RNA sequence: GGGAACGACUCGAGUAGAGUCGAAAAAAGUCCAUAUGCCCACCUUCGCUGGCGCGGGUGGAUGCUUAUACAUGCUAUGGAUGCCUACAUUUGAAAUAAUGUAGAUGCCUAAUACUCUCUCUCAGGGAGAGAGUUUAGAUGCCUCCAAAGCGCAUGCCUAUUUAGGGCUAUUCGUAGCCCUAAAUAGAAAAGAAACAACAACAACAAC
Reactivity to DMS in 0.01 (KOAc 150mM, MgCl2 10mM, bicine 150mM(pH8.5), 24C), signal-to-noise 3, nucleotides 027 to 156: a060a050g000u000c010c010a130u010a090u010g010c020c000c010a040c010c020u000u000c170g010c060u020g010g010c090g020c130g010g000g020u010g010g000a060u000g020c030u030u000a120u000a100c040a090u010g010c000u000a300u010g010g030a030u010g000c060c000u010a010c010a030u000u000u000g020a170a100a140u000a030a010u000g010u000a010g010a160u000g020c060c000u000a020a040u000a040c010u000c000u000c000u000c000u010c170a300g000g050g000a020g010a020g000a010g030u000u000u000a000g010a090u010g010c020c040u000c020c020a030a060a170g030c130g010c010a030u000g010c060
Reactivity to 2A3 in 0.01 (KOAc 150mM, MgCl2 10mM, bicine 150mM(pH8.5), 24C), signal-to-noise 4, nucleotides 027 to 156: a000a000g060u000c010c000a010u030a030u180g020c010c000c000a020c010c000u100u120c090g010c060u100g160g000c050g010c020g040g000g000u020g000g000a030u120g020c020u100u090a060u040a140c030a030u100g010c000u030a010u050g000g000a010u020g000c000c000u010a000c000a010u000u020u060g130a150a110a070u130a070a000u050g000u010a010g020a070u120g050c010c000u030a030a010u150a110c000u010c000u000c000u010c000u030c170a170g100g300g000a000g000a000g000a000g000u000u000u000a000g000a010u060g030c010c030u030c010c000a050a070a000g060c030g000c020a000u060g030c000
An RNA of 207 nucleotides, treated with DMS and 2A3 and read out base by base.
2A3 is a SHAPE reagent: it acylates the 2'-hydroxyl of flexible nucleotides of all four kinds.
The 2A3 profile rests on 3,007 reads.
The RNA was probed in 150 mM KOAc, 10 mM MgCl2 and 150 mM bicine (pH 8.5) at 24 C.
The DMS profile rests on 6,080 reads.